This 177-nucleotide RNA was probed chemically with DMS and 2A3.
The 2A3 profile rests on 1,788 reads.
Source: RMDB library TTRDEL, as collected in RNAgym.
The RNA was probed in 150 mM KOAc, 10 mM MgCl2 and 150 mM bicine (pH 8.5) at 24 C.
The DMS profile rests on 976 reads.
RNA sequence: GGGAACGACUCGAGUAGAGUCGAAAAGAUAUGGAUGAAGCGUCAGUCCUUUGAUCUCGGAAACGAGGGAGGACGACGAACUACUUCAUCCUAAGUCAAAACUUAGCCGCCUUCGGGCGGCUAAGAAGGUAUAUUUUAUGUUCGCAUAAAAUAUACCAAAAGAAACAACAACAACAAC
Reactivity to DMS in 0.01 (KOAc 150mM, MgCl2 10mM, bicine 150mM(pH8.5), 24C), signal-to-noise 1, nucleotides 027 to 126: g010a030u010a300u000g010g000a030u010g020a000a010g000c060g000u010c010a120g060u000c000c000u000u030u010g000a040u010c000u000c000g010g000a140a060a240c020g010a000g000g010g010a010g030g020a060c010g000a020c010g000a000a040c050u010a300c000u000u000c000a000u000c010c000u010a000a100g000u000c010a110a090a200a130c000u010u000a010g010c000c000g060c000c000u000u000c190g020g000g050c020g020g000c000u010a000a010g010a090a060
Reactivity to 2A3 in 0.01 (KOAc 150mM, MgCl2 10mM, bicine 150mM(pH8.5), 24C), signal-to-noise 1, nucleotides 027 to 126: g040a000u090a040u120g000g020a000u000g000a020a020g080c010g010u020c090a290g020u020c030c000u200u230u190g070a140u020c000u010c010g040g010a090a060a050c020g000a010g000g000g010a010g000g000a000c000g000a000c020g030a010a010c030u210a030c000u060u030c000a000u000c010c010u010a120a010g020u040c000a080a020a100a070c010u020u030a000g010c060c030g010c070c070u090u100c200g150g000g000c000g090g040c000u000a000a000g020a000a000